[RMDB]
Background
Conditions: 150 mM KOAc, 10 mM MgCl2 and 150 mM bicine (pH 8.5), 24 C. This 177-nucleotide RNA was probed chemically with 2A3 and DMS. The 2A3 profile rests on 1,127 reads. For DMS, 776 sequencing reads were counted. It was measured as part of the RMDB library TTRDEL. For 2A3 the reverse transcriptase was SuperScript II with manganese.
RNA sequence: GGGAACGACUCGAGUAGAGUCGAAAAGAUAUGGAUUUUCAGCUUUGAUCGCACUGAGUCGGAAACGACUUUGCGGGAGCUGGGAUCCUAAGUCAAAGAUUUAGUGUGGUUCGCCACACUAAAUCAACAGAAUGGCUUGGUUCGCCAAGCCAUUCUGAAAAGAAACAACAACAACAAC
Reactivity to 2A3 in 0.01 (KOAc 150mM, MgCl2 10mM, bicine 150mM(pH8.5), 24C), signal-to-noise 1, nucleotides 027 to 126: g000a000u130a070u150g030g000a030u070u080u270u300c010a000g010c050u100u240u200g280a220u300c010g000c020a060c200u270g100a020g010u010c020g000g000a000a040a030c000g000a000c000u010u000u040g050c010g030g000g000a010g000c010u000g000g020g000a000u070c000c000u030a180a010g020u000c080a170a020a070g000a000u040u000u010a000g010u020g000u000g030g110u060u070c300g060c100c000a000c000a010c000u000a000a000a000u000c000a000a000
Reactivity to DMS in 0.01 (KOAc 150mM, MgCl2 10mM, bicine 150mM(pH8.5), 24C), signal-to-noise 1, nucleotides 027 to 126: g040a010u000a300u010g010g000a020u010u000u000u030c020a010g010c000u010u010u000g040a060u010c000g010c020a040c300u010g010a010g010u020c000g000g000a130a070a170c010g010a010c000u000u000u000g000c010g020g000g000a020g010c010u000g010g010g000a000u000c000c010u010a020a040g000u000c000a100a190a130g010a000u000u000u000a020g020u000g020u000g010g010u010u010c290g030c000c000a000c000a010c000u000a000a000a010u010c000a110a220